RNA sequence: GGGAACGACUCGAGUAGAGUCGAAAAAGCGUUGAAACAAUUCUUAAAAGCCGACCGUCUCAAAACAGGGUGAAGAGAGCAGCGGAAGAGAGAGACGCUUGGAUGGCAGCAGCAGGCCUGAGCAACAUCAAUAUCUCAAAUUCGUUUGAGAUAUUGAAAAAGAAACAACAACAACAAC
Reactivity to DMS in 0.01 (KOAc 150mM, MgCl2 10mM, bicine 150mM(pH8.5), 24C), signal-to-noise 8, nucleotides 027 to 126: a050g010c070g000u000u000g000a160a100a100c110a140a120u020u000c010u010u000a090a090a160a180g010c020c020g020a120c070c030g010u010c030u000c050a060a060a110a110c120a080g000g000g020u010g010a110a090g000a130g000a060g000c040a040g010c070g000g000a060a050g000a170g020a090g000a180g000a040c060g010c040u000u010g000g000a120u000g000g010c020a050g010c050a050g010c070a050g000g000c030c020u000g000a080g000c100a050a070c160a120
Reactivity to 2A3 in 0.01 (KOAc 150mM, MgCl2 10mM, bicine 150mM(pH8.5), 24C), signal-to-noise 9, nucleotides 027 to 126: a000g050c040g000u030u020g060a060a080a040c060a120a130u110u020c020u050u130a160a120a040a020g040c000c010g040a090c000c020g060u020c010u000c030a120a220a080a070c050a090g090g030g030u100g100a150a040g040a020g000a010g020c040a020g010c020g030g020a100a000g040a010g000a000g000a000g000a030c000g000c000u010u030g030g010a040u050g030g010c030a040g000c000a000g010c020a020g080g000c000c010u030g010a040g010c030a010a050c000a070
Notes
Structure probing data (DMS and 2A3) for a 177-nucleotide construct. Conditions: 150 mM KOAc, 10 mM MgCl2 and 150 mM bicine (pH 8.5), 24 C. In probing experiments dimethyl sulfate is read out at A N1 and C N3, which are open when not base-paired. Source: RMDB libraries RFM100 and RFMREP, as collected in RNAgym. 2A3 adducts were read by reverse transcription with SuperScript II with manganese.